[RMDB]
RNA sequence: GGGAACGACUCGAGUAGAGUCGAAAAGUAUGGAUGCCACCGUGACGGCUCAAUCACACAAGUGCCAACGAUAACGAGGCGCUCGCUACUGCUGCGUAACUGACGGCCUGACGGUCUGACGUUACAAAAAACGAAAAGUGGUUCGCCACUUUUCGAAGACAGGUAUUACGUUCGCGUAAUACCUGUCAAAAGAAACAACAACAACAAC
Reactivity to 2A3 in 0.01 (KOAc 150mM, MgCl2 10mM, bicine 150mM(pH8.5), 24C), signal-to-noise 4, nucleotides 027 to 156: g070u050a050u200g020g060a050u090g020c010c020a050c050c040g040u050g050a070c040g030g020c020u030c080a060a120u110c030a030c030a040c020a210a050g020u020g010c010c000a120a040c100g100a140u110a220a080c050g020a050g000g000c030g010c030u040c030g060c030u110a080c010u080g050c030u050g070c040g040u000a010a020c010u010g030a010c020g000g030c000c010u170g110a090c110g000g000u010c000u010g000a010c020g010u010u010a020c000a020a030a000a010a000a000c010g000a000a010a000a000g000u010g070g010u050u080c180g040c050c000a000c000u000u000u000u010c010g010a060a000
Reactivity to DMS in 0.01 (KOAc 150mM, MgCl2 10mM, bicine 150mM(pH8.5), 24C), signal-to-noise 1, nucleotides 027 to 156: g030u000a120u000g000g000a070u000g030c030c030a080c050c060g000u000g050a150c180g010g000c010u040c030a140a100u010c020a110c060a090c120a040a140g040u020g000c040c000a030a150c130g020a060u020a090a070c030g000a150g020g000c070g000c000u000c030g020c010u000a010c170u000g040c040u010g040c050g000u000a050a070c000u000g000a300c300g010g000c000c000u070g050a130c240g080g030u000c040u020g010a200c140g000u060u020a130c010a020a050a030a000a040a210c040g000a100a010a010a040g020u000g070g020u000u000c300g000c020c000a000c010u000u000u000u000c020g000a040a080
Source: RMDB library M2RFPK, as collected in RNAgym. Chemical mapping of a 207-nucleotide RNA with 2A3 and DMS. Conditions: 150 mM KOAc, 10 mM MgCl2 and 150 mM bicine (pH 8.5), 24 C. Values cover nucleotides 27 to 156. For DMS, 1,653 sequencing reads were counted.